[RMDB]
RNA sequence: GGGAACGACUCGAGUAGAGUCGAAAAGCACAGCUCGGAAAUGAGACACGGUCCUUAACUCCUCCGAGACGCAGCACUCUCAGUAAAAUUUGAAUACAUUCUUUUCCUUCCAGUAUUGCAGAAUAGUGAGGAUAAAAGUGAAAGAGGAUGCAAAAGACCUAUGAGCGAUAUUCGUAUCGCUCAUAGGAAAAGAAACAACAACAACAAC
Reactivity to 2A3 in 0.01 (KOAc 150mM, MgCl2 10mM, bicine 150mM(pH8.5), 24C), signal-to-noise 5, nucleotides 027 to 156: g010c010a020c040a060g020c010u000c010g020g030a050a100a120u200g000a080g020a050c030a030c140g070g050u110c040c020u080u120a090a060c030u010c010c010u000c020c010g020a020g070a040c030g000c020a020g010c010a030c030u030c000u010c050a040g080u130a040a120a100a120u140u160u170g050a060a020u070a080c030a050u060u030c010u040u030u020u030c000c010u040u070c020c000a060g040u060a110u070u110g040c010a020g010a130a000u130a050g070u070g040a020g020g000a010u060a050a100a010a000g100u110g070a030a040a010g040a020g020g000a000u040g010c020a040a050a050a030g110a040
Reactivity to DMS in 0.01 (KOAc 150mM, MgCl2 10mM, bicine 150mM(pH8.5), 24C), signal-to-noise 2, nucleotides 027 to 156: g030c020a040c070a050g040c010u010c030g030g010a060a080a140u010g000a150g010a120c100a190c070g010g000u000c050c020u000u000a100a160c030u010c000c040u000c000c000g010a050g000a070c070g010c020a210g020c050a150c080u000c010u000c010a150g030u010a040a070a040a090u010u020u000g020a110a110u020a090c020a050u010u000c010u000u000u000u000c010c000u010u000c040c010a120g030u000a070u000u000g040c060a070g000a050a060u000a060g040u010g000a070g020g010a110u000a030a070a030a060g010u010g000a040a040a060g020a030g020g000a050u000g050c040a050a080a070a120g010a140
This 207-nucleotide RNA was probed chemically with 2A3 and DMS. For 2A3 the reverse transcriptase was SuperScript II with manganese. The reactions ran in a buffer of 150 mM KOAc, 10 mM MgCl2 and 150 mM bicine (pH 8.5), at 24 C. The 2A3 profile rests on 2,921 reads. DMS adducts were read by reverse transcription with MarathonRT. 2A3 is a SHAPE reagent: it acylates the 2'-hydroxyl of flexible nucleotides of all four kinds. For DMS, 3,705 sequencing reads were counted.